[RMDB]
RNA sequence: GGGAACGACUCGAGUAGAGUCGAAAAUACUCAGUCUCAGCACCAGGCUCAUAAUUUACUGUGAUAUACUGCAUAUUGAAAUUGAACUGUCUUUGCUAGGGAGUAGCUGGCAAACCAGGCCCUCGGGGUCAGCGUGGUCCAACGGUAGGUGCCUUGAGGAAGUGAAUGAGUUCGCUCAUUCACUUCCAAAAGAAACAACAACAACAAC
Reactivity to 2A3 in 0.01 (KOAc 150mM, MgCl2 10mM, bicine 150mM(pH8.5), 24C), signal-to-noise 1, nucleotides 027 to 156: u160a030c020u000c000a000g060u070c010u000c030a060g000c000a060c110c000a010g000g010c010u040c030a100u110a300a100u140u140u150a110c060u080g020u050g050a000u060a010u060a160c130u120g000c030a030u030a080u200u200g200a030a170a000u170u130g000a070a030c010u030g070u100c070u150u000u100g080c050u010a020g020g020g030a050g070u030a060g080c030u030g030g010c020a090a040a090c030c030a030g070g000c020c000c030u060c120g070g000g000g000u010c020a000g080c010g020u050g010g010u060c070c070a090a030c040g020g000u040a050g010g020u050g020c040c030u000u010g020a010